[RMDB]
RNA sequence: GGGAACGACUCGAGUAGAGUCGAAAAAGCCAUACCAUUACGAUGGUAUGGCAAGUCCGUGACGGCGGUGGAUCCCGCCUGGCCGAUGCCGAACUGCCGAUCUGGCUGAUGGUUCCUGCCCCGUCAAAAAACGUAAAGCACUUCGGUGCUUUACGAACCUGAGCGUAAUGUUCGCAUUACGCUCAGGAAAAGAAACAACAACAACAAC
Reactivity to 2A3 in 0.01 (KOAc 150mM, MgCl2 10mM, bicine 150mM(pH8.5), 24C), signal-to-noise 1, nucleotides 027 to 156: a000g000c000c000a010u000a010c000c000a020u010u030a050c260g070a060u010g020g000u000a000u000g010g000c000a000a030g000u000c000c010g010u020g000a000c000g020g070c040g000g040u020g010g030a020u040c020c040c000g000c060c020u000g010g000c000c040g050a100u210g050c030c000g110a150a090c150u130g030c030c020g030a120u060c030u150g000g020c030u060g030a100u120g030g010u040u030c030c000u080g060c000c030c000c010g100u020c040a080a080a030a000a000a000c000g010u000a000a000a000g000c020a000c000u010u090c150g060g000u010g000c000u000u000u000a000c020g000a000a020
About this RNA: Structure probing data (2A3) for a 207-nucleotide construct. Conditions: 150 mM KOAc, 10 mM MgCl2 and 150 mM bicine (pH 8.5), 24 C. For 2A3, 803 sequencing reads were counted. High 2A3 reactivity points to a flexible backbone, as in loops and unpaired stretches. It was measured as part of the RMDB library M2RFPK.